[RMDB]
This 177-nucleotide RNA was probed chemically with 2A3 and DMS. The reactions ran in a buffer of 150 mM KOAc, 10 mM MgCl2 and 150 mM bicine (pH 8.5), at 24 C. The DMS profile rests on 2,123 reads. Reactivities are rounded to 0.1 and cut off at 0 and 3. Reactivities are given for positions 27 through 126. For DMS the reverse transcriptase was MarathonRT.
RNA sequence: GGGAACGACUCGAGUAGAGUCGAAAAAGUGGAGCCUGCGGCUUAAUUUGACUCAACACGGGAACAUUUACCAGGUACGAACAUAAGUGUGUAAGACAGAUUGAUAGCUCUUUCUCGAAUCUAUGGGAGUCUACGAUUACUUCGGUAAUCGUAGACUAAAAGAAACAACAACAACAAC
Reactivity to 2A3 in 0.01 (KOAc 150mM, MgCl2 10mM, bicine 150mM(pH8.5), 24C), signal-to-noise 3, nucleotides 027 to 126: a000g070u050g030g010a010g060c000c030u070g040c050g000g010c030u040u050a010a030u120u040u080g020a010c000u000c050a060a000c010a040c050g000g000g060a150a010c030a040u080u140u060a170c000c020a050g020g000u020a020c030g010a080a010c000a030u110a150a050g070u050g000u030g040u230a000a050g030a020c050a010g090a070u090u120g050a050u130a030g020c000u000c000u040u080u020c000u000c010g030a060a080u000c010u040a080u110g090g000g020
Reactivity to DMS in 0.01 (KOAc 150mM, MgCl2 10mM, bicine 150mM(pH8.5), 24C), signal-to-noise 2, nucleotides 027 to 126: a090g020u020g010g020a060g000c080c000u020g060c070g000g000c050u000u000a060a100u040u020u020g000a060c070u000c060a080a050c040a060c080g000g040g000a090a070c260a140u020u000u040a120c030c020a110g010g000u000a010c100g000a070a080c080a030u000a090a060g000u000g060u010g000u030a080a050g000a010c120a010g050a080u000u030g000a000u010a050g000c050u000c070u000u000u020c030u000c010g000a060a020u000c020u010a040u010g000g010g000